The data come from the RNA Mapping Database (RMDB), library OK1LIB. An RNA of 177 nucleotides, treated with 2A3 and DMS and read out base by base. DMS adducts were read by reverse transcription with MarathonRT. The 2A3 profile rests on 2,035 reads. Conditions: 150 mM KOAc, 10 mM MgCl2 and 150 mM bicine (pH 8.5), 24 C.
RNA sequence: GGGAACGACUCGAGUAGAGUCGAAAACCUCGUCGAUUUUCAAAAGGAUCUCGCGCGCGUGAUCAAGGAAUGAUGCUCCCGCACGCGUCAGCUCCACGCGCCGCGUAGAGCGGAUGAACAGUUGCACCAUCGAUACCGGAUUCGUCCGGUAUCGAUGAAAAGAAACAACAACAACAAC
Reactivity to 2A3 in 0.01 (KOAc 150mM, MgCl2 10mM, bicine 150mM(pH8.5), 24C), signal-to-noise 3, nucleotides 027 to 126: c010c020u050c020g110u020c030g060a140u010u080u030u150c080a060a080a020a010g090g020a060u050c030u000c010g010c010g020c010g000c000g010u020g050a130u100c140a110a090g020g000a070a070u010g020a010u030g060c000u100c000c060c030g090c030a020c010g000c000g020u010c020a010g010c030u040c040c010a050c020g010c010g030c090c010g000c000g020u120a060g020a010g020c020g030g030a030u020g070a050a030c030a080g020u080u100g040c010a000c000
Reactivity to DMS in 0.01 (KOAc 150mM, MgCl2 10mM, bicine 150mM(pH8.5), 24C), signal-to-noise 2, nucleotides 027 to 126: c050c000u000c110g030u000c050g010a060u010u070u030u020c020a100a030a240a190g020g000a070u000c030u000c000g030c020g000c060g000c000g000u000g000a100u040c130a110a060g020g000a040a160u000g010a090u000g000c000u000c010c030c060g000c070a030c190g000c040g030u000c020a040g000c130u010c070c000a050c000g000c010g060c090c190g000c030g000u040a030g000a040g000c040g010g010a050u000g000a050a070c190a080g000u000u000g000c060a150c170